[RMDB]
RNA sequence: GGGAACGACUCGAGUAGAGUCGAAAAACAAAUACUCACGCUGCUAGGCGGGUGCGCACUGCUGUCUGGCCCGGCGCCGCGCUAGGGCGCACACCUAGCGUUGCAAACGGUAACCGGGCUGAAAAAACUAAAACAGAUGAUUCGUCAUCUGUUUUAGAAAAGAAACAACAACAACAAC
Reactivity to DMS in 0.01 (KOAc 150mM, MgCl2 10mM, bicine 150mM(pH8.5), 24C), signal-to-noise 5, nucleotides 027 to 126: a050c090a060a070a090u000a050c020u010c030a140c140g010c080u000g000c070u010a080g010g030c050g010g010g020u000g000c030g000c020a190c020u000g010c020u000g000u000c100u010g010g020c000c000c010g030g010c300g000c000c030g020c010g010c000u000a000g000g020g000c090g010c120a030c050a140c010c000u000a010g000c000g020u000u000g010c110a080a070a220c060g000g010u000a080a100c010c000g000g010g010c010u010g000a000a020a050a090a070a140
Reactivity to 2A3 in 0.01 (KOAc 150mM, MgCl2 10mM, bicine 150mM(pH8.5), 24C), signal-to-noise 2, nucleotides 027 to 126: a000c040a000a050a020u100a030c020u020c020a040c060g120c040u150g030c050u060a060g030g020c030g000g040g030u020g000c030g000c020a090c090u070g000c020u040g050u170c060u090g030g000c010c000c000g020g000c040g000c000c020g020c000g000c010u020a000g000g030g000c050g050c050a020c020a030c030c010u000a000g000c010g000u020u060g010c010a110a110a080c090g060g020u060a060a070c000c010g000g010g000c010u030g020a070a000a010a020a000a010